[RMDB]
RNA sequence: GGGAACGACUCGAGUAGAGUCGAAAAGAUAAGCUAGCAGCAAAAAGGAACCGAUUCCCACCAAGUUCGGAAAGAGAUACCGGGCGAGGCGCUGAAGAAAGAUUCUCGCUUCAGACACCCCAAGGACAUGACCUUAAAAUGUUCGCAUUUUAAGGAAGUAUACCAUAGGGUUCGCCCUAUGGUAUACAAAAGAAACAACAACAACAAC
Reactivity to 2A3 in 0.01 (KOAc 150mM, MgCl2 10mM, bicine 150mM(pH8.5), 24C), signal-to-noise 3, nucleotides 027 to 156: g020a070u120a090a030g030c040u070a020g010c070a000g000c030a040a020a070a030a100g060g020a050a010c050c040g050a090u030u030c020c000c010a030c020c030a110a030g010u030u040c020g010g050a090a100a060g110a040g020a030u080a090c030c000g010g010g020c020g020a020g020g010c060g000c070u030g010a010a000g010a020a250a020g080a050u140u020c060u030c080g020c000u040u030c030a040g040a050c020a080c020c040c000c040a020a070g030g020a030c030a120u120g100a070c010c000u010u010a000a000a000a000u010g000u020u070c180g030c100a000u000u000u010u000a000a000g000g000a000a020
Reactivity to DMS in 0.01 (KOAc 150mM, MgCl2 10mM, bicine 150mM(pH8.5), 24C), signal-to-noise 1, nucleotides 027 to 156: g020a070u020a100a110g030c040u000a040g050c020a130g040c060a000a070a090a080a200g010g000a120a070c020c020g000a170u020u000c000c020c020a180c100c050a120a160g010u000u000c050g000g000a050a110a090g000a110g000a080u010a080c030c010g020g070g000c060g060a140g020g010c010g030c060u000g000a020a070g020a070a100a050g030a170u000u000c010u000c030g000c040u000u000c010a040g000a300c050a040c050c000c020c030a040a090g000g000a080c040a060u010g000a160c000c010u000u000a000a020a020a010u000g030u000u000c220g040c000a020u000u000u000u000a000a010g040g010a020a110